[RMDB]
RNA sequence: GGGAACGACUCGAGUAGAGUCGAAAAUUGAACGGAUUCGUCCGUUCAACGCGUGCGAUCCAAACGUAGUACAAAAGUACAGACGAAUGCACAAGGAUCAAAUGAUACAGCCGUUCGCGGCUGUAAAUCGUAUCCAUAUAUUCGUAUAUGGAUACGAAAAAGAAACAACAACAACAAC
Reactivity to DMS in 0.01 (KOAc 150mM, MgCl2 10mM, bicine 150mM(pH8.5), 24C), signal-to-noise 9, nucleotides 027 to 126: u000u000g000a010a010c000g010g000a030u000u010c210g010u000c000c000g000u000u000c000a000a020c130g010c120g010u000g010c090g010a020u000c000c010a060a160a190c010g020u000a080g010u010a020c020a080a050a060a130g010u000a010c000a070g000a100c090g010a130a070u000g000c040a030c060a110a140g010g010a020u000c020a090a090a070u010g010a250u000a010c000a000g000c000c000g010u000u010c210g020c010g000g000c010u000g000u000a000a050a110
Reactivity to 2A3 in 0.01 (KOAc 150mM, MgCl2 10mM, bicine 150mM(pH8.5), 24C), signal-to-noise 9, nucleotides 027 to 126: u010u010g000a000a000c000g000g010a010u030u050c180g060u000c030c000g000u010u000c000a000a000c030g040c030g040u050g020c050g030a010u000c020c000a040a040a020c030g030u030a020g010u010a040c030a040a300a100a070g010u010a010c010a050g160a060c040g070a170a100u270g010c050a040c040a120a070g020g000a020u030c010a030a040a050u160g040a030u010a050c000a000g000c030c000g030u030u080c210g000c010g090g000c000u010g000u010a010a000a020